[RMDB]
RNA sequence: GGGAACGACUCGAGUAGAGUCGAAAAGAUAUGGAUAAUCCGUAACAGCUUGGAUUUACUAGGGAAACGUACAUCGGAAACGAUGUACUAUCCCUAGUUGUCAGCUGGAGAAGGAUUAUCCUAAGUCCUUGCGUGAAAAGUUCGCUUUUCACGCAAGAAAAGAAACAACAACAACAAC
Reactivity to DMS in 0.01 (KOAc 150mM, MgCl2 10mM, bicine 150mM(pH8.5), 24C), signal-to-noise 1, nucleotides 027 to 126: g010a100u020a230u010g020g010a010u000a000a010u010c000c000g000u000a100a290c000a050g000c010u000u010g030g010a040u000u010u000a000c000u000a000g000g020g000a070a210a240c300g030u020a040c010a000u000c000g020g000a090a210a260c000g000a040u000g020u000a000c000u010a280u000c000c000c000u000a000g000u000u020g000u000c010a010g000c000u020g020g030a080g040a210a160g000g010a020u000u000a010u000c000c010u010a010a040g000u000c010